[RMDB]
RNA sequence: GGGAACGACUCGAGUAGAGUCGAAAAAACGCCAUCGUCACCGACACGAACCUGAGCAUCAACCACUUCAACGCCCAACUCGCAGUCAAAGGAAUCUCAUACAUGUACUUCGAAAACGAAUCGAACGUACCCAUCCGCUACCACCUACGCUAUGCCGUCUAUCAUGUGGGUUCGCCCACAUGAUAGAAAAAGAAACAACAACAACAAC
Reactivity to 2A3 in 0.01 (KOAc 150mM, MgCl2 10mM, bicine 150mM(pH8.5), 24C), signal-to-noise 5, nucleotides 027 to 156: a000a000c080g020c040c010a060u070c030g060u030c030a050c050c070g060a050c030a020c160g060a050a010c020c050u060g020a020g050c010a050u060c050a020a050c010c020a050c030u110u080c090a060a040c060g050c000c000c020a050a050c020u020c020g040c040a020g060u090c040a100a030a030g070g010a070a090u020c040u030c080a060u110a210c040a040u200g020u020a020c010u000u010c010g000a010a010a090a110c140g050a110a110u030c000g010a020a040c050g000u020a020c000c020c020a040u030c010c000g000c010u000a050c000c030a020c000c010u040a010c040g010c020u040a030u170g070c030c010g050
Reactivity to DMS in 0.01 (KOAc 150mM, MgCl2 10mM, bicine 150mM(pH8.5), 24C), signal-to-noise 1, nucleotides 027 to 156: a040a030c030g040c000c060a090u000c080g020u000c040a130c060c020g110a140c010a100c070g050a120a060c010c020u000g010a150g030c050a070u000c060a060a170c020c040a110c050u010u010c020a050a090c050g010c030c020c000a080a070c050u000c050g040c020a130g020u010c040a050a020a050g020g030a080a060u020c040u000c100a110u000a020c060a060u000g010u000a080c040u000u000c020g040a040a000a010a050c140g020a090a110u000c010g000a060a050c080g010u000a080c010c060c010a090u000c030c010g000c050u000a060c020c010a020c020c020u000a010c050g000c020u000a080u000g000c020c020g030